[RMDB]
RNA sequence: GGGAACGACUCGAGUAGAGUCGAAAAUGCGUAUCAAACACUAUAUGGCGCUUUAUCCUGACGCCUGGCUUUCAGGGCAGCGUUAUUUCGAACUUUGGCCGCGUGUGAUUAACUUGCGCCAUUCAGGAAGGAUAUACUGGUUCGCCAGUAUAUCCUUAAAAGAAACAACAACAACAAC
Reactivity to 2A3 in 0.01 (KOAc 150mM, MgCl2 10mM, bicine 150mM(pH8.5), 24C), signal-to-noise 3, nucleotides 027 to 126: u070g010c030g030u040a090u280c080a090a130a030c050a010c150u080a120u030a060u300g040g000c000g000c000u040u060u080a060u060c020c010u010g010a000c020g030c020c130u040g110g030c040u080u180u160c100a060g000g050g000c000a000g020c000g000u060u050a110u110u160u130c070g050a100a070c040u060u040u080g040g010c060c030g000c040g000u040g020u040g030a110u120u080a060a040c050u040u110g000c000g020c040c000a030u030u050c030a000g120g050
Reactivity to DMS in 0.01 (KOAc 150mM, MgCl2 10mM, bicine 150mM(pH8.5), 24C), signal-to-noise 7, nucleotides 027 to 126: u000g010c020g010u000a100u000c090a130a090a100c120a100c130u010a100u000a100u010g010g010c010g010c020u000u000u000a100u010c010c030u010g020a040c300g010c050c050u000g030g000c090u000u000u000c140a070g000g000g020c140a080g000c070g010u000u010a070u010u000u000c090g010a110a100c130u000u000u000g010g020c080c030g020c060g020u000g010u010g000a120u010u020a050a060c100u000u000g020c020g010c010c020a040u000u010c150a050g010g010